RNA sequence: GGGAACGACUCGAGUAGAGUCGAAAAGCCACGCCCAUGCGCGAAGGGGUGCAGCUGCGCAGCGCAGGGUAGGUUGUGCUAGUGCCCCUCCCCUCCCGCUCUGUGCCCCGCCGGGCGGGGACCGUGGGAGCCGCGGACAAGCCCAAGGCCGGAGCGGCUUAUCAGUCGGUUUCGACCGACUGAUAAGAAAAGAAACAACAACAACAAC
Reactivity to 2A3 in 0.01 (KOAc 150mM, MgCl2 10mM, bicine 150mM(pH8.5), 24C), signal-to-noise 1, nucleotides 027 to 156: g050c000c000a030c030g020c000c010c000a240u090g010c090g000c020g080a060a020g020g030g010g000u060g000c030a030g250c110u290g030c080g000c060a000g030c020g000c040a020g010g030g010u040a110g020g080u050u030g030u060g000c090u030a050g040u030g130c000c000c000c000u040c010c000c000c000u000c010c000c000g000c010u010c000u010g210u290g020c000c010c030c020g060c060c030g010g000g010c000g030g000g000g010a050c040c000g010u040g010g090g060a130g130c030c000g000c000g010g030a060c040a070a010g020c000c000c020a020a020g020g000c000c000g010g010a020g000c000g010g000
Reactivity to DMS in 0.01 (KOAc 150mM, MgCl2 10mM, bicine 150mM(pH8.5), 24C), signal-to-noise 1, nucleotides 027 to 156: g040c000c020a020c000g010c000c010c050a060u010g010c040g010c010g020a080a030g040g040g140g030u000g050c020a080g000c110u000g020c060g020c060a120g030c040g080c050a110g020g040g040u000a040g020g040u010u010g000u000g000c020u000a180g050u000g000c020c040c000c000u000c000c000c000c000u000c050c010c010g080c000u000c010u000g020u000g010c000c030c000c050g000c050c060g040g010g060c010g020g040g000g020a110c010c020g000u000g010g000g000a110g040c040c010g060c000g010g060a080c020a100a200g000c000c000c020a280a110g000g010c000c030g020g000a090g010c140g010g020